[RMDB]
RNA sequence: GGGAACGACUCGAGUAGAGUCGAAAAUCAUUGGCUUCGCUGCGCGCUGCGUUGCCUAGGCUUCAGAUGCUUCGUACUGUUGCCAACGUUGCAAUUUCCAAACGCAAAUGCGAAAGUGUGCAAACAAGAGUCAUCGUAUCUUCGGAUACGAUGACUCAAAAGAAACAACAACAACAAC
Reactivity to DMS in 0.01 (KOAc 150mM, MgCl2 10mM, bicine 150mM(pH8.5), 24C), signal-to-noise 1, nucleotides 027 to 126: u040c150a080u000u000g000g000c010u000u010c020g000c020u010g010c190g020c010g000c020u000g010c060g030u000u000g000c020c040u000a230g040g000c010u020u020c080a030g020a300u000g010c110u040u020c130g010u010a070c040u000g030u000u020g010c000c010a080a190c080g000u020u010g000c020a070a100u000u000u000c010c010a040a080a140c040g000c090a100a170a020u000g030c110g020a090a110a070g000u000g000u000g000c030a060a080a030c300a120a070
Reactivity to 2A3 in 0.01 (KOAc 150mM, MgCl2 10mM, bicine 150mM(pH8.5), 24C), signal-to-noise 2, nucleotides 027 to 126: u140c020a030u030u070g010g000c000u010u000c010g040c030u120g000c020g000c010g040c030u010g000c000g030u000u020g000c000c000u010a060g000g000c000u020u010c010a050g030a300u080g110c040u130u120c040g090u070a030c000u020g020u020u010g030c010c000a050a010c050g090u050u100g010c010a080a110u000u030u030c020c000a060a000a030c040g010c020a100a200a120u240g000c040g060a030a000a010g060u050g000u010g020c000a010a050a040c020a100a090
This 177-nucleotide RNA was probed chemically with DMS and 2A3. 2A3 adducts were read by reverse transcription with SuperScript II with manganese. DMS (dimethyl sulfate) methylates the pairing face of unpaired adenines and cytosines. Reactivities are given for positions 27 through 126. The DMS profile rests on 628 reads. For DMS the reverse transcriptase was MarathonRT.